RNA sequence: GGGAACGACUCGAGUAGAGUCGAAAAGCAAGAUGCUUCGGCAUCUUGCAGUCCUAGCGCGAUCGACAGAAUUACAGCUAUGUCGAACGAGGAAGAGCGCGCACAUCAUCCCUUUCGAGGGAUGAAAGCUAAGAUAAGGAUUCGUCCUUAUCUUAGCAAAAGAAACAACAACAACAAC
Reactivity to 2A3 in 0.01 (KOAc 150mM, MgCl2 10mM, bicine 150mM(pH8.5), 24C), signal-to-noise 9, nucleotides 027 to 126: g000c000a000a000g000a000u010g000c010u060u130c240g100g000c010a000u000c000u000u000g000c000a000g010u000c000c000u050a100g000c010g000c000g040a080u030c010g010a000c000a020g090a090a050u220u160a210c060a100g100c120u100a050u100g010u000c010g010a040a070c060g060a100g120g100a100a060g040a010g130c010g000c000g010c010a030c010a070u040c000a000u000c010c000c000u030u060u100c240g100a020g000g000g000a000u000g000a020a020a000
Reactivity to DMS in 0.01 (KOAc 150mM, MgCl2 10mM, bicine 150mM(pH8.5), 24C), signal-to-noise 9, nucleotides 027 to 126: g000c000a010a000g000a010u000g010c000u000u010c210g030g010c000a000u000c000u000u000g000c000a030g010u000c000c000u000a080g020c020g010c010g010a110u000c000g010a020c010a020g000a150a140u000u010a130c300a150g010c090u000a100u000g000u000c000g010a020a140c160g000a130g010g010a090a060g000a110g000c010g000c000g020c040a120c240a120u000c000a010u000c000c000c000u000u000u010c160g010a020g000g000g000a000u000g000a010a060a100
Overview: Chemical mapping of a 177-nucleotide RNA with 2A3 and DMS. It was measured as part of the RMDB library M2PK50. For 2A3, 63,590 sequencing reads were counted. DMS adducts were read by reverse transcription with MarathonRT.